[RMDB]
Structure probing data (DMS and 2A3) for a 177-nucleotide construct.

RNA sequence: GGGAACGACUCGAGUAGAGUCGAAAAAGGCUGGACCCUGAAGAAUUGAUGCAGCUCCUUGAUCAUCGGUUUACGAGAGAGCCUUUAGAGGCGAUCCAUACAAUCUUGACAGAUUUUGAGGACAAGCUCAUCGGACGCUAUUCGUAGCGUCCGAUGAAAAAGAAACAACAACAACAAC
Reactivity to DMS in 0.01 (KOAc 150mM, MgCl2 10mM, bicine 150mM(pH8.5), 24C), signal-to-noise 1, nucleotides 027 to 126: a130g000g050c080u050g000g000a200c050c000c030u060g000a150a110g000a010a180u000u000g000a050u000g020c000a120g000c170u020c000c000u000u040g000a000u000c020a300u000c000g020g000u000u040u010a040c140g030a100g000a070g000a170g030c000c000u060u000u050a120g000a070g000g030c010g000a110u040c000c020a080u040a000c220a040a050u010c050u090u040g000a110c300a060g000a040u000u000u040u040g130a110g000g000a050c120a150a090g000c030
Reactivity to 2A3 in 0.01 (KOAc 150mM, MgCl2 10mM, bicine 150mM(pH8.5), 24C), signal-to-noise 2, nucleotides 027 to 126: a000g100g000c000u010g030g040a100c000c000c000u040g010a050a010g070a280a170u260u220g060a070u090g060c010a040g000c040u040c000c000u030u020g010a020u030c040a000u010c060g030g050u050u090u120a050c060g010a050g030a040g000a090g250c070c030u200u120u200a230g030a010g050g000c000g000a010u000c000c000a060u070a160c130a020a010u000c010u090u190g070a040c060a060g050a170u000u000u160u270g130a130g000g050a040c020a200a000g000c000